[RMDB]
RNA sequence: GGGAACGACUCGAGUAGAGUCGAAAAUGACCUAGCACGGACUUGGUCGCCACGCUUAGCUCCCCCUGACCUGCUUUUGAACCCGCUAAUCCACCCCAACUCUUGCCCCGACGUUCACUCCACGCGCCCUGUGUGUAGAUUUCGAUCUACACACAGGAAAAGAAACAACAACAACAAC
Reactivity to 2A3 in 0.01 (KOAc 150mM, MgCl2 10mM, bicine 150mM(pH8.5), 24C), signal-to-noise 9, nucleotides 027 to 126: u150g030a020c010c010u020a010g010c040a050c230g070g080a110c030u040u070g020g010u030c000g030c020c000a060c020g040c040u090u130a020g010c000u030c000c010c010c000c010u010g020a060c000c010u030g040c030u070u070u050u130g020a030a040c000c010c000g010c050u050a040a020u020c010c010a040c010c010c010c000a010a070c020u020c010u040u050g030c010c000c010c010g010a020c020g020u030u060c020a030c050u020c010c010a050c020g060c000g010c000
Reactivity to DMS in 0.01 (KOAc 150mM, MgCl2 10mM, bicine 150mM(pH8.5), 24C), signal-to-noise 5, nucleotides 027 to 126: u020g000a060c020c000u000a090g040c060a160c130g010g020a090c040u000u000g000g000u010c030g000c060c010a070c090g000c040u000u010a090g010c060u000c020c000c000c010c010u000g000a110c060c020u010g000c030u000u010u020u010g010a100a100c050c020c020g010c070u030a050a080u000c030c050a070c040c000c030c020a060a070c060u000c060u010u010g000c010c010c010c010g010a100c060g010u010u010c050a050c040u010c020c040a080c060g010c090g000c120